Overview
The record gives the reactivity of an RNA of 207 nucleotides to 2A3. The 2A3 profile rests on 532 reads. 2A3 is a SHAPE reagent: it acylates the 2'-hydroxyl of flexible nucleotides of all four kinds. Values are in units of 0.01, from 0 to 300, in steps of 10. The data come from the RNA Mapping Database (RMDB), library VIROID. The RNA was probed in 150 mM KOAc, 10 mM MgCl2 and 150 mM bicine (pH 8.5) at 24 C.
[RMDB]
RNA sequence: GGGAACGACUCGAGUAGAGUCGAAAAGAGGUCGGGGGCUUCGGACUACUCCUUCGUGAGACAGGAGUAAUCCCCGCUGAAACAGGGUUUUCACCCUUCCUUUCUUCGGGUUUCCUUCCUCUCGCCUGGAGAGGUCUUCGGCCCUCGCCCGGAGCUUCCAAUGAAAAUUCUUCGGAAUUUUCAUUGGAAAAGAAACAACAACAACAAC
Reactivity to 2A3 in 0.01 (KOAc 150mM, MgCl2 10mM, bicine 150mM(pH8.5), 24C), signal-to-noise 1, nucleotides 027 to 156: g150a080g000g020u180c010g000g000g000g010g010c020u040u040c030g010g010a000c010u130a150c010u080c010c020u150u150c040g000u010g000a000g000a010c260a130g000g010a010g000u010a030a030u010c010c000c010c000g000c000u000g020a010a000a090c300a070g030g010g050u100u150u300u300c180a080c010c000c040u040u040c010c010u020u000u000c000u000u010c010g030g050g020u030u020u060c030c000u040u070c000c010u010c000u000c000g000c000c010u030g040g010a030g030a100g030g040u000c000u020u040c010g000g000c000c000c000u000c000g000c000c010c000g070g050a040g020c030u030u000